[RMDB]
RNA sequence: GGGAACGACUCGAGUAGAGUCGAAAACACGUUUGCCUCCCAGAUGCCACCAAAAUUGGGAGAAUAUGGAGGUGUGAAAUGCCACCUUGUCCCAUGUUGGCAUGUCGAUUCAUUUAGAGCUGCUAAAGGAGCAUUACCUAUUCGUAGGUAAUGCUCCAAAAGAAACAACAACAACAAC
Reactivity to DMS in 0.01 (KOAc 150mM, MgCl2 10mM, bicine 150mM(pH8.5), 24C), signal-to-noise 3, nucleotides 027 to 126: c070a130c110g000u020u010u020g000c060c030u000c020c030c030a130g010a060u010g040c010c000a100c060c100a040a050a140a140u050u020g010g000g010a050g000a110a110u030a070u010g000g020a050g000g000u000g050u030g000a070a130a060u030g010c050c010a050c020c020u010u000g000u000c000c000c010a040u010g000u020u000g000g000c040a030u000g020u010c030g030a030u010u040c060a060u010u000u020a090g000a080g020c060u010g000c050u000a080a080a120
Reactivity to 2A3 in 0.01 (KOAc 150mM, MgCl2 10mM, bicine 150mM(pH8.5), 24C), signal-to-noise 6, nucleotides 027 to 126: c100a000c040g050u070u160u190g060c000c000u070c000c000c010a020g020a100u060g010c000c010a050c030c030a120a020a040a180u170u040g000g000g000a050g070a050a090u290a170u170g070g020a030g030g000u020g000u020g150a140a060a080u210g080c050c020a000c010c000u000u050g060u010c010c010c000a010u040g010u030u010g000g020c010a010u000g080u070c050g020a050u070u060c030a050u040u120u190a120g000a020g040c050u070g030c040u110a090a110a010